[RMDB]
RNA sequence: GGGAACGACUCGAGUAGAGUCGAAAAUGGGCAACUUGGCAGCCAAGGGGCAAUUUCCAUCUAGUUUAUCUUGUAAGAUAAUGGGCUCAAAACAUCUUACUUGACCACUCAAAUGGUCUAAAGGACCCUUCCAAGAGUAGUUCGCUACUCUUGGAAGAAAAGAAACAACAACAACAAC
Reactivity to DMS in 0.01 (KOAc 150mM, MgCl2 10mM, bicine 150mM(pH8.5), 24C), signal-to-noise 4, nucleotides 027 to 126: u010g020g020g010c030a060a070c050u000u010g000g010c150a100g030c060c040a060a060g010g020g020g000c030a130a060u010u000u000c020c010a090u010c110u010a060g040u000u010u010a090u040c020u000u010g000u010a030a030g030a020u010a080a110u000g020g010g030c070u000c070a020a070a110a100c170a040u010c030u010u000a050c030u000u010g000a030c100c080a040c090u000c240a100a060a160u020g000g000u000c010u010a040a100a170g010g000a080c110c040
Reactivity to 2A3 in 0.01 (KOAc 150mM, MgCl2 10mM, bicine 150mM(pH8.5), 24C), signal-to-noise 2, nucleotides 027 to 126: u110g040g010g000c040a020a040c070u050u080g080g050c080a040g100c050c030a010a010g000g000g020g000c010a030a010u060u040u020c020c010a050u000c080u110a100g060u000u100u120a070u000c000u010u130g020u120a050a020g010a010u030a040a080u120g020g070g030c030u030c100a060a080a000a060c040a000u030c000u040u040a020c000u000u030g020a040c030c020a020c070u100c050a100a150a130u080g010g000u000c010u040a080a080a020g110g000a020c000c010
Source information
Chemical mapping of a 177-nucleotide RNA with DMS and 2A3. Values cover nucleotides 27 to 126. For 2A3 the reverse transcriptase was SuperScript II with manganese. The RNA was probed in 150 mM KOAc, 10 mM MgCl2 and 150 mM bicine (pH 8.5) at 24 C. It was measured as part of the RMDB library OK2TRN.